Description:
The record gives the reactivity of an RNA of 207 nucleotides to 2A3 and DMS. For DMS the reverse transcriptase was MarathonRT.

RNA sequence: GGGAACGACUCGAGUAGAGUCGAAAAAACUCUUUAAGGCAAUAACGAACGAAUUCUAAGCAAGUAAUGGAGAAAUGCCAGGGUCACUAUCUAGCCAUAAUAGUGCUUGACAGUAUGAUACUAACUGAAUAUGGUAAACCGUUCGCGGUUUACCAAACUAUGCUUAUCCGUUCGCGGAUAAGCAUAGAAAAGAAACAACAACAACAAC
Reactivity to 2A3 in 0.01 (KOAc 150mM, MgCl2 10mM, bicine 150mM(pH8.5), 24C), signal-to-noise 2, nucleotides 027 to 156: a000a000c210u200c120u110u130u050a130a040g080g000c040a030a150u070a190a060c120g000a000a000c040g060a050a030u070u000c020u160a080a000g070c030a000a140g010u060a000a050u130g020g010a010g020a040a200a000u050g000c030c060a020g000g010g040u040c030a010c030u010a020u010c050u030a010g010c030c030a010u010a060a090u070a070g040u060g050c000u030u020g030a040c000a010g010u060a060u190g030a070u020a120c070u020a150a060c050u000g040a120a040u150a140u160g000g010u000a000a000a000c010c010g010u060u030c190g020c010g120g020u010u000u030a000c000c000a000a000a000
Reactivity to DMS in 0.01 (KOAc 150mM, MgCl2 10mM, bicine 150mM(pH8.5), 24C), signal-to-noise 1, nucleotides 027 to 156: a030a050c030u000c010u010u010u000a080a090g040g000c010a080a090u000a110a100c080g000a090a120c040g040a110a020u000u000c040u000a040a100g020c060a030a200g000u000a070a090u000g020g010a060g000a110a090a070u000g030c040c020a070g030g000g040u000c020a030c000u000a080u000c060u000a070g010c020c030a170u000a060a060u000a080g050u020g020c020u050u010g010a020c030a040g020u000a040u010g010a070u000a050c040u010a100a160c090u000g000a070a080u000a120u000g030g000u000a000a010a000c020c010g060u000u000c290g010c010g020g000u000u000u010a000c000c000a010a010a090
The 2A3 profile rests on 660 reads. The reactions ran in a buffer of 150 mM KOAc, 10 mM MgCl2 and 150 mM bicine (pH 8.5), at 24 C. Source: RMDB library M2RFPK, as collected in RNAgym.